[RMDB]
RNA sequence: GGGAACGACUCGAGUAGAGUCGAAAAAAGGUCACCCAUCAGGGCUACACUGAGAAGGAAGUAUCACUUGGACUGAAUAGUAUGAAAAAAAGUAACAGGAAUCAUCACCUGUUUAAUAAAGAUGUUCCACGGACAGAGUAUUCGUACUCUGUCCGUGAAAAGAAACAACAACAACAAC
Reactivity to DMS in 0.01 (KOAc 150mM, MgCl2 10mM, bicine 150mM(pH8.5), 24C), signal-to-noise 1, nucleotides 027 to 126: a070a080g000g000u010c040a080c030c010c020a100u020c100a010g010g010g010c020u010a040c090a100c070u010g010a080g030a190a060g000g020a110a060g030u010a040u010c030a040c050u000u010g000g010a060c000u020g000a040a040u000a080g000u010a020u010g000a000a010a030a170a070a050a170g030u020a080a020c010a010g000g010a050a130u000c040a020u000c070a010c020c000u000g000u010u020u000a030a060u010a000a020a050g010a050u000g010u010u020c180

This 177-nucleotide RNA was probed chemically with DMS. It was measured as part of the RMDB library OK2TRN. The RNA was probed in 150 mM KOAc, 10 mM MgCl2 and 150 mM bicine (pH 8.5) at 24 C.